[RMDB]
RNA sequence: GGGAACGACUCGAGUAGAGUCGAAAAGCGCUGUCGCUUUCUGGUGCCCAUAUGCAGACCAUUUUGGAUAAUCCAUUGGCGGAGCCGUUUACGCUGGGUAUUUCGGCGGCGGCGGCUUUCGGUGGCAGUAUACCCCACUGUUCGCAGUGGGGUAUACAAAAGAAACAACAACAACAAC
Reactivity to DMS in 0.01 (KOAc 150mM, MgCl2 10mM, bicine 150mM(pH8.5), 24C), signal-to-noise 2, nucleotides 027 to 126: g010c070g030c220u010g010u010c030g030c020u000u000u000c100u030g010g010u000g020c020c000c010a130u010a040u000g020c090a090g020a170c030c030a070u000u000u000u000g020g010a180u000a130a160u000c010c010a040u000u000g000g030c100g020g000a060g000c020c040g000u000u000u000a150c040g000c050u000g010g010g010u000a090u010u010u000c080g000g020c000g030g010c190g030g000c010g010g020c000u000u000u000c030g010g030u010g000g010c130a150
Reactivity to 2A3 in 0.01 (KOAc 150mM, MgCl2 10mM, bicine 150mM(pH8.5), 24C), signal-to-noise 1, nucleotides 027 to 126: g020c040g080c110u090g120u180c030g020c090u110u100u000c060u080g150g040u070g030c020c000c030a030u040a040u110g040c000a020g030a220c000c000a050u050u130u080u210g010g010a040u080a140a070u260c010c010a040u040u030g030g060c080g010g010a010g000c010c010g020u060u090u120a040c010g020c040u080g030g080g000u230a240u120u210u260c010g010g000c010g030g010c010g000g010c120g000g000c000u050u060u090c030g060g000u070g030g000c010a010